An RNA of 207 nucleotides, treated with DMS and 2A3 and read out base by base.
RNA sequence: GGGAACGACUCGAGUAGAGUCGAAAAGAAUCCUGGGGGACUUAAGAGCAUCAAGAUGCAUUGAGUUUUGGCGCAAGGAUCUUCCCUUGCCCUGCCACCCACAGAGGAAAAGCCUGCUGCCCUCCACAGCGGCAUUAUUGCAGACAGGCAGGAGAAAAAUGCUUGGUUAAUUCGUUAACCAAGCAUUAAAAGAAACAACAACAACAAC
Reactivity to DMS in 0.01 (KOAc 150mM, MgCl2 10mM, bicine 150mM(pH8.5), 24C), signal-to-noise 1, nucleotides 027 to 156: g000a160a100u000c030c010u010g000g000g050g060g000a030c010u000u000a040a050g010a190g060c020a010u000c030a180a120g010a190u000g060c010a260u010u000g020a070g000u010u000u000u000g000g070c040g050c060a050a020g030g000a140u020c090u010u010c090c000c000u000u010g000c020c000c050u000g000c060c010a150c090c000c020a140c100a170g000a120g000g000a130a080a100a190g010c010c010u000g020c050u020g010c000c020c050u000c040c170a150c030a070g030c080g030g000c030a040u000u000a030u020u000g000c030a020g020a110c050a230g000g000c030a030g010g020a170g000a000a080a130
Reactivity to 2A3 in 0.01 (KOAc 150mM, MgCl2 10mM, bicine 150mM(pH8.5), 24C), signal-to-noise 2, nucleotides 027 to 156: g030a020a040u000c010c010u010g010g020g000g000g000a000c010u000u030a000a010g030a060g080c010a030u090c120a080a090g030a260u030g020c010a030u000u080g010a030g040u040u100u200u220g100g000c060g000c060a020a000g040g040a070u060c110u040u120c050c000c020u000u010g020c000c000c000u000g010c000c000a050c020c040c000a150c140a110g140a270g040g060a080a080a000a000g010c000c020u020g020c070u030g020c010c000c040u040c070c010a030c020a020g000c000g030g000c000a000u010u180a060u020u190g030c030a000g040a100c010a030g000g000c020a010g040g030a070g020a070a040a020
The RNA was probed in 150 mM KOAc, 10 mM MgCl2 and 150 mM bicine (pH 8.5) at 24 C. 2A3 adducts were read by reverse transcription with SuperScript II with manganese. The data come from the RNA Mapping Database (RMDB), library OK3TST.